An RNA of 177 nucleotides, treated with 2A3 and DMS and read out base by base. Source: RMDB library OK2TRN, as collected in RNAgym.
RNA sequence: GGGAACGACUCGAGUAGAGUCGAAAAUGCCGAAUGGCACACGCCUGCGUGGCGAUAUUAAUGUCUUGCUUAUCGGCGAUCCUUCGGUGGCCAAGUCGCAGCUACUGCGCUACGUCUUGAAUACGGCGAGCUGACCUGAGUUCGCUCAGGUCAGCUCAAAAGAAACAACAACAACAAC
Reactivity to 2A3 in 0.01 (KOAc 150mM, MgCl2 10mM, bicine 150mM(pH8.5), 24C), signal-to-noise 1, nucleotides 027 to 126: u170g000c000c030g000a080a030u110g000g000c000a010c010a030c000g000c020c040u160g050c270g220u300g000g020c030g020a000u030a090u160u230a110a120u100g090u030c080u110u100g000c030u090u100a110u100c010g010g050c020g000a050u020c000c010u060u080c050g040g000u020g050g000c000c050a000a010g010u070c030g000c030a040g000c000u030a090c160u240g020c000g000c080u000a000c020g020u030c000u020u040g050a000a000u080a080c040g010g040c080
Reactivity to DMS in 0.01 (KOAc 150mM, MgCl2 10mM, bicine 150mM(pH8.5), 24C), signal-to-noise 1, nucleotides 027 to 126: u010g030c000c000g020a050a300u000g020g000c000a020c110a140c010g010c000c000u020g040c160g020u000g020g000c040g000a080u000a070u000u000a120a030u030g000u000c200u000u020g010c000u000u000a080u000c050g000g000c000g010a070u000c040c000u000u030c090g000g000u000g020g000c200c010a030a060g000u000c050g000c020a000g000c010u000a280c300u000g000c110g000c020u000a010c020g020u000c000u000u000g010a130a290u000a050c090g000g000c160
2A3 adducts were read by reverse transcription with SuperScript II with manganese. The DMS profile rests on 546 reads. 2A3 is a SHAPE reagent: it acylates the 2'-hydroxyl of flexible nucleotides of all four kinds.